Notes: Source: RMDB library OK2TST, as collected in RNAgym. Chemical mapping of a 177-nucleotide RNA with DMS.

RNA sequence: GGGAACGACUCGAGUAGAGUCGAAAAAAUCACUUAAAUUGUCAGACCUUCAUUUUCCCUUUCUAACAAAGGCAGAAGUUUUACAAGGUCAGCAUUUGAGGAUUAGGGAGGAUGUGUACAUUGUGAAAGCACCAUUACCAUUCGUGGUAAUGGUGCUAAAAGAAACAACAACAACAAC
Reactivity to DMS in 0.01 (KOAc 150mM, MgCl2 10mM, bicine 150mM(pH8.5), 24C), signal-to-noise 1, nucleotides 027 to 126: a050a010u000c010a090c020u010u000a070a010a070u000u020g000u000c020a080g000a020c040c020u000u000c090a080u000u000u020u000c170c010c000u000u000u000c090u010a150a110c120a030a000a010g000g000c190a120g020a010a040g010u000u020u030u020a110c180a050a090g000g000u000c020a200g030c000a030u000u000u000g000a220g000g000a040u000u020a040g010g000g020a050g010g000a040u010g010u000g010u000a060c140a100u040u010g010u010g000a120a090

For DMS, 914 sequencing reads were counted.
The reactions ran in a buffer of 150 mM KOAc, 10 mM MgCl2 and 150 mM bicine (pH 8.5), at 24 C.